[RMDB]
RNA sequence: GGGAACGACUCGAGUAGAGUCGAAAAUGUCACCUGUGUGUUUUCUCUGCAUGCCCUCUUCAUUGUUCUGCUGAAGACUGGUCUCUUCAUGUGUGAGGGAGGAGGUUGGGUAUUGAGGGAAAACAGGCCAUACGACUUUCUUCGGAAAGUCGUAUGGAAAAGAAACAACAACAACAAC
Reactivity to 2A3 in 0.01 (KOAc 150mM, MgCl2 10mM, bicine 150mM(pH8.5), 24C), signal-to-noise 1, nucleotides 027 to 126: u150g070u110c030a040c170c000u030g040u020g010u010g050u110u010u010u010c020u030c010u040g150c020a000u010g010c020c040c000u010c000u080u020c020a110u030u120g180u300u000c000u030g030c000u000g020a010a010g000a020c040u140g120g010u060c030u000c000u090u000c040a080u190g020u030g040u020g060a030g040g020g000a040g030g000a020g010g010u190u100g010g030g000u030a080u020u130g040a000g050g010g000a010a020a000a000c000a010g040g050
Description
The data come from the RNA Mapping Database (RMDB), library RFMREP. Structure probing data (2A3) for a 177-nucleotide construct. 2A3 adducts were read by reverse transcription with SuperScript II with manganese. For 2A3, 1,075 sequencing reads were counted. The reactions ran in a buffer of 150 mM KOAc, 10 mM MgCl2 and 150 mM bicine (pH 8.5), at 24 C.